Description:
The data come from the RNA Mapping Database (RMDB), library OK2TRN. Structure probing data (DMS and 2A3) for a 177-nucleotide construct. DMS adducts were read by reverse transcription with MarathonRT. The RNA was probed in 150 mM KOAc, 10 mM MgCl2 and 150 mM bicine (pH 8.5) at 24 C.
RNA sequence: GGGAACGACUCGAGUAGAGUCGAAAACUCUGGUCAAGGUCACCACGGGCCUCCAGGUGGCCCAAUCCAUGGACGCCUUCUCUUACGAGACCAUGUGCUGAACUGGACGCUGCCAAUCUCCUUUGCAUCUUACGACGCAAUUCGUUGCGUCGUAAGAAAAAGAAACAACAACAACAAC
Reactivity to DMS in 0.01 (KOAc 150mM, MgCl2 10mM, bicine 150mM(pH8.5), 24C), signal-to-noise 2, nucleotides 027 to 126: c030u010c020u000g010g000u000c060a090a010g010g020u010c040a100c020c020a090c140g000g000g000c070c030u000c040c040a050g000g050u000g010g000c000c030c050a050a050u000c090c070a110u000g000g010a090c130g010c070c060u000u000c000u000c010u020u010a090c200g070a040g000a100c060c030a010u020g030u000g010c070u010g000a120a050c080u000g000g020a050c090g000c010u000g000c010c000a070a080u000c040u000c020c030u000u000u000g010c210a120
Reactivity to 2A3 in 0.01 (KOAc 150mM, MgCl2 10mM, bicine 150mM(pH8.5), 24C), signal-to-noise 1, nucleotides 027 to 126: c030u060c020u020g000g020u040c060a010a080g000g000u010c010a020c050c050a090c080g020g020g050c000c000u040c030c040a060g050g040u050g030g000c000c000c000a040a070u070c030c020a090u070g010g000a030c030g040c000c010u080u010c010u000c000u050u150a060c130g000a000g000a050c010c010a050u040g070u080g050c060u050g020a090a050c020u030g000g050a020c040g000c040u030g020c040c010a000a040u000c010u040c030c030u040u140u050g050c030a090
The 2A3 profile rests on 1,612 reads.